[RMDB]
RNA sequence: GGGAACGACUCGAGUAGAGUCGAAAAGAUAUGGACUACCCACCUCGUGAACUACAGGUGAAGUGUCGGAAACGACAUGGAGGCCUGCACGAGAGGUCCUAAGUCAAAACAGCUCUUCGGAGCUGAACACGACGUCAGGGUUCGCCCUGACGUCGUGAAAAGAAACAACAACAACAAC
Reactivity to DMS in 0.01 (KOAc 150mM, MgCl2 10mM, bicine 150mM(pH8.5), 24C), signal-to-noise 1, nucleotides 027 to 126: g000a050u000a200u000g000g030a020c030u000a270c000c030c030a300c200c000u000c000g000u000g000a160a000c110u000a300c020a030g000g000u000g000a250a170g050u000g000u000c000g050g000a080a050a300c000g000a000c030a000u000g000g000a300g020g000c000c000u000g000c000a000c000g000a030g000a050g000g000u000c000c000u000a060a170g000u000c090a150a050a120a150c000a000g000c020u000c000u000u000c300g000g000a020g000c000u020g030a050a020
This 177-nucleotide RNA was probed chemically with DMS. Reactivities are given for positions 27 through 126. The reactions ran in a buffer of 150 mM KOAc, 10 mM MgCl2 and 150 mM bicine (pH 8.5), at 24 C. It was measured as part of the RMDB library TTRDEL.